Chemical mapping of a 177-nucleotide RNA with 2A3. For 2A3 the reverse transcriptase was SuperScript II with manganese. The RNA was probed in 150 mM KOAc, 10 mM MgCl2 and 150 mM bicine (pH 8.5) at 24 C. Values are in units of 0.01, from 0 to 300, in steps of 10. The data come from the RNA Mapping Database (RMDB), library OK1LIB.
[RMDB]
RNA sequence: GGGAACGACUCGAGUAGAGUCGAAAAGUAGUCGAGCUUUUUUCAUACUCUUUUGAGUAUGGUCUUUUGACUUAGAUCUCGAACAGCGCCAAGAGAUCUAGCGGUGCUGUAAGCUCUUGACUACGAAGGGAUUCACAUACUUCGGUAUGUGAAUCCCAAAAGAAACAACAACAACAAC
Reactivity to 2A3 in 0.01 (KOAc 150mM, MgCl2 10mM, bicine 150mM(pH8.5), 24C), signal-to-noise 1, nucleotides 027 to 126: g020u020a010g000u000c000g000a000g000c030u040u110u030u000u040u080c000a000u000a000c000u020c000u060u120u090u300g000a000g000u000a000u030g070g000u060c010u070u100u030u220g000a000c010u050u000a000g000a020u040c040u000c060g010a030a010c020a030g090c030g000c030c010a060a000g060a030g000a100u050c000u050a040g110c150g020g000u130g050c070u070g050u060a000a000g000c000u020c000u100u140g000a000c000u010a000c000g000a000a020